RNA sequence: GGGAACGACUCGAGUAGAGUCGAAAACCCUGGAACUUCGGUUCCAGGGCAUGGUGCAAAUCCCGCGCUGAAACGGAGCGAUAUCCGUCCCAAAAAUAUAAAAAGCUGAUGAUUUCGAUCAUCAGAAACCUUUGAUCUUAUUCGUAAGAUCAAAGGUAAAAGAAACAACAACAACAAC
Reactivity to 2A3 in 0.01 (KOAc 150mM, MgCl2 10mM, bicine 150mM(pH8.5), 24C), signal-to-noise 6, nucleotides 027 to 126: c010c000c000u000g000g010a000a010c010u030u100c260g100g000u010u000c000c000a000g010g000g000c010a070u160g100g040u160g050c040a040a050a120u040c000c010c010g000c010g000c010u100g040a090a040a030c010g010g000a020g000c060g040a020u010a020u070c000c010g030u070c020c000c000a070a150a020a040a000u230a020u110a100a190a040a020a020g060c010u010g010a010u010g000a010u020u060u170c230g060a020u010c000a000u000c000a000g020a060a030
Reactivity to DMS in 0.01 (KOAc 150mM, MgCl2 10mM, bicine 150mM(pH8.5), 24C), signal-to-noise 4, nucleotides 027 to 126: c010c000c000u010g010g000a010a000c000u000u020c160g030g000u000u000c000c000a020g010g010g000c040a020u010g000g000u000g010c120a060a080a170u000c020c010c020g010c030g020c050u000g010a100a090a040c010g020g000a020g010c040g010a110u020a060u010c000c000g000u000c030c060c050a030a060a090a100a080u000a090u020a110a070a070a120a120g000c000u000g020a020u000g000a020u000u000u000c160g000a010u000c000a010u010c000a000g010a040a060